[RMDB]
RNA sequence: GGGAACGACUCGAGUAGAGUCGAAAAUGGAAUCACAACCAGCAAAUGUUCUGGAGCCAACUGCUUAUUCCUCUGGCUGCACUUAUCGUGGUGACGCGUUUACUGAAGUGCCUGUGUUGCGUGGUGCACGAUCAUAAGGCUUCGGCCUUAUGAUCGUAAAAGAAACAACAACAACAAC
Reactivity to 2A3 in 0.01 (KOAc 150mM, MgCl2 10mM, bicine 150mM(pH8.5), 24C), signal-to-noise 1, nucleotides 027 to 126: u100g000g070a070a010u070c000a000c000a020a080c040c010a030g000c010a040a120a230u150g010u100u070c010u090g080g000a000g040c020c000a040a040c070u060g040c000u150u120a070u170u060c050c000u000c050u060g010g000c000u050g000c000a000c030u060u060a080u130c020g000u080g070g070u080g000a050c000g050c000g110u080u130u050a100c080u070g070a040a030g050u070g040c000c000u060g010u040g020u190u170g080c030g020u020g000g000u070g060c050
Reactivity to DMS in 0.01 (KOAc 150mM, MgCl2 10mM, bicine 150mM(pH8.5), 24C), signal-to-noise 3, nucleotides 027 to 126: u000g010g000a150a070u010c090a110c110a060a130c020c010a100g000c090a100a070a130u000g020u000u000c030u010g010g000a070g010c030c040a050a080c090u000g000c040u000u000a180u010u000c040c010u000c140u000g010g000c060u000g000c020a020c080u000u000a050u010c090g020u020g000g010u000g010a170c070g000c040g000u000u010u000a060c120u010g010a050a070g020u000g000c020c060u000g010u000g000u000u000g020c040g040u000g010g030u000g000c070

Chemical mapping of a 177-nucleotide RNA with 2A3 and DMS. 2A3 is a SHAPE reagent: it acylates the 2'-hydroxyl of flexible nucleotides of all four kinds. Reactivities are given for positions 27 through 126. The 2A3 profile rests on 1,019 reads. The RNA was probed in 150 mM KOAc, 10 mM MgCl2 and 150 mM bicine (pH 8.5) at 24 C.